An RNA of 177 nucleotides, treated with 2A3 and DMS and read out base by base. The RNA was probed in 150 mM KOAc, 10 mM MgCl2 and 150 mM bicine (pH 8.5) at 24 C. DMS adducts were read by reverse transcription with MarathonRT. Source: RMDB library OK1LIB, as collected in RNAgym.
[RMDB]
RNA sequence: GGGAACGACUCGAGUAGAGUCGAAAAGGCUGAGAAUGGAGGAUCACCUGAGCCCAGAAUUCAAGGCUGUCAUGAGCCAUGGUCACGUCACUGCACACCAGUGUGCAAUCUUUUAAGAUCCUGUCUCUAUAGUGCUGGUUUUCGAACCAGCACUAUAAAAAGAAACAACAACAACAAC
Reactivity to 2A3 in 0.01 (KOAc 150mM, MgCl2 10mM, bicine 150mM(pH8.5), 24C), signal-to-noise 6, nucleotides 027 to 126: g040g000c050u050g020a030g060a170a110u180g040g070a060g050g010a040u040c030a080c100c020u080g030a000g030c000c000c000a030g130a050a060u150u110c030a070a030g040g000c020u080g050u070c070a100u170g070a010g000c000c040a040u030g060g000u020c030a020c070g010u010c030a000c120u030g020c030a030c020a070c020c050a090g090u010g000u030g080c010a010a060u020c050u030u240u110u190a080a070g020a010u000c000c000u050g040u030c050u000c000
Reactivity to DMS in 0.01 (KOAc 150mM, MgCl2 10mM, bicine 150mM(pH8.5), 24C), signal-to-noise 5, nucleotides 027 to 126: g010g010c070u000g010a250g010a050a080u010g010g010a120g020g000a130u020c070a080c060c040u010g000a110g000c010c000c020a120g000a140a100u010u010c070a080a130g010g010c020u010g010u000c120a090u010g000a060g010c000c020a050u010g010g000u000c040a080c160g000u010c070a060c090u010g010c030a060c070a030c110c130a130g000u010g030u000g010c020a050a050u030c020u000u010u010u030a110a100g000a040u000c020c000u010g000u020c040u020c050